An RNA of 177 nucleotides, treated with 2A3 and DMS and read out base by base. The DMS profile rests on 45,852 reads. For 2A3, 65,433 sequencing reads were counted. For DMS the reverse transcriptase was MarathonRT. The reactions ran in a buffer of 150 mM KOAc, 10 mM MgCl2 and 150 mM bicine (pH 8.5), at 24 C.

RNA sequence: GGGAACGACUCGAGUAGAGUCGAAAAACAACACGCUUCGGCGUGUUGUCGACGGAGGAAGCUGAGGACGCGCUUGUGCGGCAGCAGGGAAGCGCAGCGUAAAUCAGAGGUGAUUCGUCACCUCUAACUACAUUAAGUAUUUCGAUACUUAAUGUAGAAAAGAAACAACAACAACAAC
Reactivity to 2A3 in 0.01 (KOAc 150mM, MgCl2 10mM, bicine 150mM(pH8.5), 24C), signal-to-noise 9, nucleotides 027 to 126: a000c000a000a000c000a000c010g010c010u040u080c240g140g000c000g000u000g000u000u000g000u010c010g030a030c040g030g030a030g030g030a070a020g010c040u040g030a040g050g030a030c040g040c000g010c070u120u140g040u070g050c030g050g010c020a030g020c020a030g030g030g040a060a020g010c020g000c040a020g010c020g050u100a040a060a070u130c060a030g000a000g010g010u030g010a020u030u060c160g030u010c070a000c000c000u000c000u000a010a020
Reactivity to DMS in 0.01 (KOAc 150mM, MgCl2 10mM, bicine 150mM(pH8.5), 24C), signal-to-noise 9, nucleotides 027 to 126: a020c000a000a010c000a010c000g020c000u000u010c190g030g010c000g020u000g010u000u000g010u000c040g000a090c090g010g000a070g000g010a090a080g010c050u000g010a070g000g010a140c140g010c060g000c050u000u010g020u000g010c040g010g010c080a060g010c060a060g000g000g000a080a070g010c060g020c030a050g010c080g010u010a040a090a110u010c150a020g010a010g010g010u000g000a050u000u010c180g010u000c000a020c010c000u000c010u000a020a110